Annotation:
An RNA of 177 nucleotides, treated with DMS and 2A3 and read out base by base. Values cover nucleotides 27 to 126. DMS adducts were read by reverse transcription with MarathonRT. The RNA was probed in 150 mM KOAc, 10 mM MgCl2 and 150 mM bicine (pH 8.5) at 24 C.
[RMDB]
RNA sequence: GGGAACGACUCGAGUAGAGUCGAAAAAUUUCGAGCGUUAUCGCGUCUUGACUAGACUGUAGGUGACGUGAGUAGGGAUCUAUCCCAGUGUGCAUAGCGCACAAUACGCUGAUCUACAGUCAUUUAACGACUGUUAGUAGUUCGCUACUAACAGUCGAAAAGAAACAACAACAACAAC
Reactivity to DMS in 0.01 (KOAc 150mM, MgCl2 10mM, bicine 150mM(pH8.5), 24C), signal-to-noise 5, nucleotides 027 to 126: a090u000u000u000c020g000a060g010c040g010u010u010a060u000c120g000c040g010u010c020u000u000g010a100c300u000a080g010a020c000u000g010u000a010g000g020u010g000a040c020g000u000g010a110g030u010a120g030g010g000a050u000c190u010a110u010c000c010c000a190g010u000g010u000g010c010a140u000a110g020c150g010c000a010c000a070a090u010a040c020g030c080u000g000a020u000c010u000a010c020a020g000u010c010a080u010u010u010a070a160
Reactivity to 2A3 in 0.01 (KOAc 150mM, MgCl2 10mM, bicine 150mM(pH8.5), 24C), signal-to-noise 7, nucleotides 027 to 126: a000u110u130u070c040g020a010g010c020g030u090u100a140u160c050g010c020g110u050c020u060u100g060a060c040u050a060g000a010c000u010g000u000a000g030g050u040g060a010c020g010u010g020a020g040u170a170g000g010g000a020u040c070u180a210u080c080c010c010a000g030u020g000u010g010c080a190u130a290g060c020g000c030a000c000a010a020u120a010c010g000c060u040g040a020u000c010u000a010c000a000g000u000c010a040u090u110u060a100a030